[RMDB]
RNA sequence: GGGAACGACUCGAGUAGAGUCGAAAAACAUAGUUUGGCCGACGUCAUACCAUUGAAGACGAAUCGUUAAAGACACCAGCUCGUCUUAUAGGAGCGCAUUUAGCAAAAACAGUCCUGUAGGAACCAACUCGGCAGUAUAAUUCGUUAUACUGCCGAGAAAAGAAACAACAACAACAAC
Reactivity to DMS in 0.01 (KOAc 150mM, MgCl2 10mM, bicine 150mM(pH8.5), 24C), signal-to-noise 2, nucleotides 027 to 126: a080c080a130u000a090g020u000u000u000g030g010c050c020g000a130c070g020u000c000a100u020a120c080c050a100u000u000g000a090a090g010a030c020g000a070a030u000c090g020u000u000a060a020a060g000a060c090a070c040c040a070g040c030u000c050g000u000c050u000u000a050u000a080g000g010a070g010c080g020c080a090u020u000u010a050g000c050a050a020a020a060a070c120a110g000u000c010c030u000g010u000a030g000g000a040a110c070c080a010a170
Reactivity to 2A3 in 0.01 (KOAc 150mM, MgCl2 10mM, bicine 150mM(pH8.5), 24C), signal-to-noise 2, nucleotides 027 to 126: a000c040a030u200a040g070u020u050u100g050g000c020c000g080a060c010g010u060c000a070u070a190c080c050a120u060u130g120a100a030g020a000c020g010a050a080u060c040g010u020u140a110a050a000g060a020c050a060c040c020a030g000c020u050c040g090u000c040u000u030a030u010a020g040g010a010g050c020g000c040a040u090u120u120a030g020c000a000a160a030a000a060c010a000g070u010c010c010u040g030u050a020g000g050a060a060c010c000a060a060